[RMDB]
RNA sequence: GGGAACGACUCGAGUAGAGUCGAAAAGAAAGAAAGAAAACGGUUGGGUGGGUCCAUCGACCGUCGUGGCGUAUUCGGACGCUUUACCACGACGCGAGGAAAUAGCGAGACCGACCACCCCCUUUAACAGAGGUAUAGUAGUUCGCUACUAUACCAAGUAUGUUAACGAGUUCGCUCGUUAACAUACAAAAGAAACAACAACAACAAC
Reactivity to DMS in 0.01 (KOAc 150mM, MgCl2 10mM, bicine 150mM(pH8.5), 24C), signal-to-noise 1, nucleotides 027 to 156: g000a120a130a110g020a180a060a200g000a170a120a090a060c070g000g000u000u000g000g000g040u000g000g000g000u000c030c030a080u000c080g000a030c160c010g040u000c010g060u000g010g030c040g000u010a120u000u000c060g030g010a120c030g010c110u000u000u010a050c040c040a000c060g000a000c010g010c000g010a110g040g010a060a070a150u000a060g020c010g020a150g000a140c030c020g000a100c010c000a060c000c010c000c030c020u000u000u000a090a180c100a060g000a160g030g020u000a000u000a020g010u000a040g040u010u010c300g060c010u010a010c020u000a020u000a020c000c000a020a070
Reactivity to 2A3 in 0.01 (KOAc 150mM, MgCl2 10mM, bicine 150mM(pH8.5), 24C), signal-to-noise 3, nucleotides 027 to 156: g090a020a070a010g090a020a130a040g070a030a130a010a000c090g020g060u190u100g110g010g000u030g020g010g010u000c010c020a090u130c010g010a030c040c000g010u000c000g000u010g000g050c060g020u150a120u090u150c080g050g060a020c010g020c030u060u060u130a050c000c000a010c010g000a000c010g020c010g010a010g000g030a030a060a090u080a040g020c030g010a050g020a110c020c000g020a000c010c000a000c000c000c000c000c000u030u150u030a100a060c100a040g070a050g140g010u010a010u000a000g000u000a000g010u000u050c130g020c100u010a000c000u000a000u010a000c000c000a000a000